[RMDB]
RNA sequence: GGGAACGACUCGAGUAGAGUCGAAAAACAUGCUGGUAUGGCAAGGAAAGCAAAAGCUGGCUAUGCAUACAUGCACCGCAAAGAUGUGUGGAGUUGCUGUGGAUCGUGGGGAAGCUGGAGUGUGGGGAGGGAGCGCAUGGGCUGGUGCACAGCUAUGGGAUUACUUACCAUUCGUGGUAAGUAAUCCAAAAGAAACAACAACAACAAC
Reactivity to 2A3 in 0.01 (KOAc 150mM, MgCl2 10mM, bicine 150mM(pH8.5), 24C), signal-to-noise 4, nucleotides 027 to 156: a000c050a040u070g000c010u090g030g010u110a060u050g100g020c030a050a070g100g040a110a060a020g010c070a120a130a030a030g040c040u030g070g000c020u090a040u120g030c030a020u040a130c010a040u070g000c010a020c060c030g020c060a040a070a000g090a090u090g000u020g000u030g100g050a120g050u120u060g040c080u040g020u030g010g060a070u100c060g070u080g000g000g000g020a010a010g000c070u080g000g040a110g030u110g010u080g040g000g000g030a110g030g020g020a020g010c040g020c000a070u090g020g040g050c050u090g030g020u080g020c060a030c010a030g020c000u070a070u130g060
This 207-nucleotide RNA was probed chemically with 2A3. The reactions ran in a buffer of 150 mM KOAc, 10 mM MgCl2 and 150 mM bicine (pH 8.5), at 24 C. The data come from the RNA Mapping Database (RMDB), library OK3TST.